RNA sequence: GGGAACGACUCGAGUAGAGUCGAAAACGCGAUGGAUACGUCCAUCGCGAAUCCGUCCAAGCCGCGGACGUUAAACUGUGGCACGGUUGUGCCUAGGUGCAACCCUGCUAGCUAUGGCGGCACCCCUGCCCAAGCUACCGUCUACGGACGGUAGCAACCACCAUGCUAAUUUCGAUUAGCAUGGUGGAAAAGAAACAACAACAACAAC
Reactivity to 2A3 in 0.01 (KOAc 150mM, MgCl2 10mM, bicine 150mM(pH8.5), 24C), signal-to-noise 2, nucleotides 027 to 156: c010g010c000g000a000u000g010g010a030u020a040c190g130u030c010c000a000u000c000g020c000g000a000a000u050c010c000g010u000c010c000a060a050g000c000c000g040c010g000g010a000c010g000u010u010a030a040a060c110u060g010u060g040g010c010a000c020g030g000u030u000g010u020g010c040c030u100a220g000g100u000g000c000a000a000c010c000c000u010g020c000u030a130g120c020u040a050u190g060g000c000g000g000c010a100c000c020c000c000u060g070c020c010c000a060a020g000c000u000a000c000c000g000u000c000u000a020c250g110g000a000c000g010g010u000a000g000c000a000a000
Source: RMDB library OK3TST, as collected in RNAgym. Structure probing data (2A3) for a 207-nucleotide construct. The 2A3 profile rests on 2,230 reads. Values cover nucleotides 27 to 156. 2A3 is a SHAPE reagent: it acylates the 2'-hydroxyl of flexible nucleotides of all four kinds.